RNA sequence: GGGAACGACUCGAGUAGAGUCGAAAAGAUAUGGAUCCACUGCAAGGCCAAACGGUCGGAAACGACCGCUAGGCUGAUGACCAGUGGAGUCCUAAGUCAAACUGCCUGGACUUCGGUCCAGGCAGAACAACAUAUAAGCCUUCGGGCUUAUAUGUUGAAAAGAAACAACAACAACAAC
Reactivity to 2A3 in 0.01 (KOAc 150mM, MgCl2 10mM, bicine 150mM(pH8.5), 24C), signal-to-noise 2, nucleotides 027 to 126: g030a010u040a030u040g000g000a000u000c000c000a010c000u000g020c020a220a300g040g000c010c010a070a120a050c020g000g010u010c010g000g000a010a030a000c000g010a010c000c000g000c020u060a060g000g000c000u000g000a000u010g000a000c000c020a000g010u000g000g000a000g020u070c000c000u000a010a000g020u010c030a040a100a120c020u020g010c000c000u000g020g000a010c010u070u090c300g090g000u010c000c000a000g000g000c000a000g000a000a000
Reactivity to DMS in 0.01 (KOAc 150mM, MgCl2 10mM, bicine 150mM(pH8.5), 24C), signal-to-noise 4, nucleotides 027 to 126: g000a040u000a140u010g000g000a300u000c000c000a000c000u000g000c000a050a090g010g030c000c000a090a100a100c020g020g010u000c000g030g010a030a030a110c000g010a010c000c000g030c050u010a170g040g010c000u000g010a060u000g010a100c300c000a000g010u000g010g000a020g010u010c000c000u000a040a100g010u010c030a050a160a260c020u000g000c010c000u000g000g000a010c000u000u000c190g010g020u000c010c000a000g000g000c000a000g000a020a100
An RNA of 177 nucleotides, treated with 2A3 and DMS and read out base by base. The reactions ran in a buffer of 150 mM KOAc, 10 mM MgCl2 and 150 mM bicine (pH 8.5), at 24 C. 2A3 adducts were read by reverse transcription with SuperScript II with manganese. It was measured as part of the RMDB library TTRDEL. For DMS the reverse transcriptase was MarathonRT. Values cover nucleotides 27 to 126.